An RNA of 177 nucleotides, treated with DMS and 2A3 and read out base by base. Conditions: 150 mM KOAc, 10 mM MgCl2 and 150 mM bicine (pH 8.5), 24 C. For 2A3 the reverse transcriptase was SuperScript II with manganese. The DMS profile rests on 7,926 reads. For DMS the reverse transcriptase was MarathonRT. Source: RMDB library TTRDEL, as collected in RNAgym. High DMS reactivity at an A or C suggests that its Watson-Crick edge is free.
RNA sequence: GGGAACGACUCGAGUAGAGUCGAAAAGAUAUGGAGAAGCUAUGAAGCCUCGGACGAUGAAAUCGGAAACGAUGGAGUCCUGGGUGGAGCUUCUCCUAAGUCAAAGCUCAUUCUUCGGAAUGAGCAACUUACACUUUUAGUUCGCUAAAAGUGUAAGAAAAGAAACAACAACAACAAC
Reactivity to DMS in 0.01 (KOAc 150mM, MgCl2 10mM, bicine 150mM(pH8.5), 24C), signal-to-noise 7, nucleotides 027 to 126: g010a050u010a300u010g000g000a000g010a010a010g020c000u000a190u010g010a170a300g000c000c000u010c300g000g000a020c010g010a100u010g000a070a140a010u000c000g000g000a090a110a130c010g000a010u000g000g010a090g010u000c000c000u000g000g000g010u000g000g010a020g000c000u000u000c010u000c000c000u000a000a050g010u010c050a110a090a130g000c000u000c000a010u000u000c000u000u010c170g030g010a020a000u000g000a000g000c000a000a030
Reactivity to 2A3 in 0.01 (KOAc 150mM, MgCl2 10mM, bicine 150mM(pH8.5), 24C), signal-to-noise 4, nucleotides 027 to 126: g020a020u080a050u160g000g000a000g000a020a000g000c010u060a110u300g030a040a000g000c000c020u020c050g010g000a010c010g160a300u110g020a020a070a000u010c010g010g000a050a040a030c020g000a010u010g000g030a010g000u000c000c000u010g000g000g010u030g000g000a000g000c000u000u000c000u010c000c000u000a020a000g010u000c030a030a050a080g000c000u000c000a000u010u000c010u040u090c300g090g010a000a000u000g000a000g000c000a000a010